[RMDB]
RNA sequence: GGGAACGACUCGAGUAGAGUCGAAAAGAUAUGGAAGUAUGUAGACAUGCACCCACUUCGGAAACGAAGUGUGAGUGCAACAGCUACUGUACUUCCUAAGUCAAACCAAAUGGUUCGCCAUUUGGAAGGCGAUAAAUCACUUCGGUGAUUUAUCGCCAAAAGAAACAACAACAACAAC
Reactivity to 2A3 in 0.01 (KOAc 150mM, MgCl2 10mM, bicine 150mM(pH8.5), 24C), signal-to-noise 1, nucleotides 027 to 126: g000a000u040a000u110g020g000a000a000g000u000a000u040g010u000a020g040a030c130a160u300g020c000a010c040c010c000a020c030u050u020c010g030g010a020a000a000c000g020a020a030g020u020g000u050g040a140g000u030g010c020a030a010c030a040g000c000u010a000c060u030g010u020a000c000u020u000c000c000u000a020a010g020u000c000a100a000a100c010c000a000a000a000u040g050g060u020u080c300g080c110c000a020u000u010u030g100g000a070a120
This 177-nucleotide RNA was probed chemically with 2A3. The 2A3 profile rests on 1,589 reads. The reactions ran in a buffer of 150 mM KOAc, 10 mM MgCl2 and 150 mM bicine (pH 8.5), at 24 C. For 2A3 the reverse transcriptase was SuperScript II with manganese.